[RMDB]
RNA sequence: GGGAACGACUCGAGUAGAGUCGAAAAGAACCCUCCCAAGAAGGACAAGAGAGAUUCGGGAAGCGGACGACUUUCCCCAAAACGCUGGAGACAUCUUGGAAGGGGAAAGAGGAGGGAUGGAAGAGAACGAUUAGAUACAGUUCGCUGUAUCUAAUCGAAAAGAAACAACAACAACAAC
Reactivity to DMS in 0.01 (KOAc 150mM, MgCl2 10mM, bicine 150mM(pH8.5), 24C), signal-to-noise 5, nucleotides 027 to 126: g000a190a190c010c000c000u000c000c010c010a060a090g010a070a080g010g010a110c090a060a230g000a070g000a090g010a120u010u000c150g010g000g000a060a040g000c060g010g010a080c120g010a100c060u000u000u000c000c000c000c080a030a040a070a100c120g010c060u000g010g020a290g000a120c100a050u000c030u000u010g010g010a070a080g010g010g000g010a010a010a040g000a130g010g010a070g000g000g010a070u010g000g000a080a080g010a100g000a060a170